[RMDB]
RNA sequence: GGGAACGACUCGAGUAGAGUCGAAAAUGAGGCCUCCCAGGUUAACAGGCAUCGCUGGGCGUAAGUCAGCUCCGAAAAGGAAAAGGGAAGCUGCACAAGAGGUGCCUUUGCUUCUGCAUCCACGUGAGGAGUCAAAAUUAUUCGUAAUUUUGACUCCAAAAGAAACAACAACAACAAC
Reactivity to DMS in 0.01 (KOAc 150mM, MgCl2 10mM, bicine 150mM(pH8.5), 24C), signal-to-noise 4, nucleotides 027 to 126: u000g010a080g010g010c040c050u010c000c000c000a120g000g010u000u010a080a110c160a070g010g020c030a020u000c050g000c030u000g010g020g030c100g010u000a060a090g000u000c010a020g000c020u000c010c010g010a090a070a100a140g020g000a050a070a120a120g010g000g000a080a070g000c010u010g010c080a100c040a090a090g010a060g000g020u000g000c030c120u000u000u010g000c030u000u000c020u010g020c100a110u010c040c030a070c160g010u010g010a220
Reactivity to 2A3 in 0.01 (KOAc 150mM, MgCl2 10mM, bicine 150mM(pH8.5), 24C), signal-to-noise 2, nucleotides 027 to 126: u130g010a030g060g000c000c000u000c000c020c000a010g020g040u070u060a100a030c030a070g020g000c010a030u030c030g010c040u040g000g070g050c090g040u030a060a000g040u060c000a010g010c000u000c010c000g150a130a090a080a100g140g030a100a100a020a050g080g030g010a090a000g000c020u030g000c010a020c000a040a060g060a040g060g040u030g000c000c020u030u040u040g000c000u000u020c000u040g030c010a050u030c010c110a040c050g070u040g060a070

Background: Chemical mapping of a 177-nucleotide RNA with DMS and 2A3. The DMS profile rests on 5,094 reads. The RNA was probed in 150 mM KOAc, 10 mM MgCl2 and 150 mM bicine (pH 8.5) at 24 C. The data come from the RNA Mapping Database (RMDB), library OK2TST. For 2A3, 3,335 sequencing reads were counted.